[RMDB]
RNA sequence: GGGAACGACUCGAGUAGAGUCGAAAAGCGUACUACAGAGCGGGAAAGUAGGCUGAUGACCGUACACACGAAGCUCCCAAAUAGGAGCUUCGGUGUACGCAAGGCCUAUAACACGCUCUGUAUCGCAAAACUAGAGAUGCUUCGGCAUCUCUAGUAAACAAAUCCCACAGUUCGCUGUGGGAUUUGUAAAAGAAACAACAACAACAAC
Reactivity to 2A3 in 0.01 (KOAc 150mM, MgCl2 10mM, bicine 150mM(pH8.5), 24C), signal-to-noise 1, nucleotides 027 to 156: g000c000g060u040a010c000u030a030c010a000g010a010g000c020g020g060g000a030a300a090g050u010a010g010g000c000u050g000a300u060g020a130c140c000g010u000a000c000a000c020a010c030g000a000a000g010c020u080c000c020c010a130a300a250u300a140g000g000a000g000c000u000u000c000g010g000u000g020u000a000c040g010c010a060a100g000g000c000c000u000a000u010a000a010c030a050c070g000c000u000c000u000g010u000a000u030c010g080c000a110a110a000a000c000u000a000g000a000g010a000u000g040c010u010u180c260g150g000c020a000u000c000u010c000u000a000g000u000a000a000